[RMDB]
RNA sequence: GGGAACGACUCGAGUAGAGUCGAAAACAUGAGGGUGGAGCUCUCAAGAAUGUCAUUAGUGCUCCUGUAAAAGAGGACUCAACUAAAAAGUGCCAUCUAGGAAGCAGAGAGCCCUCACCAGAUGCUGAAUAUGCUGGUGCCUUGAUCUUGGACUUCCACCUAUUUAAUCGUUCGCGAUUAAAUAGGUAAAAGAAACAACAACAACAAC
Reactivity to DMS in 0.01 (KOAc 150mM, MgCl2 10mM, bicine 150mM(pH8.5), 24C), signal-to-noise 3, nucleotides 027 to 156: c050a110u020g010a100g020g030g010u000g020g020a090g010c000u000c020u000c010a080a100g020a160a120u000g030u010c060a130u010u000a070g010u010g000c050u010c010c020u020g020u000a100a070a120a120g010a050g000g020a030c030u000c050a060a210c070u020a060a060a110a100a110g000u000g000c040c020a060u000c040u000a210g010g020a060a090g040c030a120g010a130g010a070g010c010c010c020u000c020a040c010c020a070g000a050u000g020c050u010g030a110a160u010a120u010g000c020u000g000g010u000g000c050c050u000u010g010a130u010c030u000u000g000g020a190c190u000u000c010c010
Reactivity to 2A3 in 0.01 (KOAc 150mM, MgCl2 10mM, bicine 150mM(pH8.5), 24C), signal-to-noise 7, nucleotides 027 to 156: c040a070u130g020a050g020g040g000u070g020g030a060g010c020u020c000u010c040a020a030g070a050a080u120g040u120c050a060u050u120a050g020u010g050c020u010c000c020u010g110u130a120a150a030a020g080a020g020g020a010c020u030c130a080a110c070u240a070a080a060a050a030g060u070g090c020c010a050u020c020u050a040g090g030a090a010g010c050a010g040a000g000a010g040c000c010c000u010c010a020c000c010a010g020a040u080g030c100u110g080a150a140u210a090u260g030c010u010g030g010u020g010c000c020u040u100g030a080u050c030u030u060g040g020a030c010u080u050c010c050